[RMDB]
RNA sequence: GGGAACGACUCGAGUAGAGUCGAAAACUACUGGUAUAACCUAUGCUUCUUAUGGAUACUUCUGUCAGAUGCCUCAGCCCAAGCUUAGAGCAGCCAUGGUUGAGUAUUCUUACAUCUUCUUAGAUGAGUGCCACUCAGAGUUCGCUCUGAGUGGCACAAAAGAAACAACAACAACAAC
Reactivity to 2A3 in 0.01 (KOAc 150mM, MgCl2 10mM, bicine 150mM(pH8.5), 24C), signal-to-noise 2, nucleotides 027 to 126: c010u110a050c060u090g030g050u080a190u110a280a190c010c010u170a220u120g050c050u090u030c000u000u150a050u300g070g000a060u010a120c000u170u210c000u040g060u040c010a030g040a140u050g070c000c000u000c020a000g000c000c000c120a030a040g020c020u130u100a030g000a030g120c020a010g070c120c000a130u030g000g010u030u030g000a010g020u010a080u010u010c000u060u110a100c030a010u030c000u180u000c010u070u280a100g000a010u060g030a020
Conditions: 150 mM KOAc, 10 mM MgCl2 and 150 mM bicine (pH 8.5), 24 C. The record gives the reactivity of an RNA of 177 nucleotides to 2A3. Reactivities are rounded to 0.1 and cut off at 0 and 3. For 2A3, 544 sequencing reads were counted.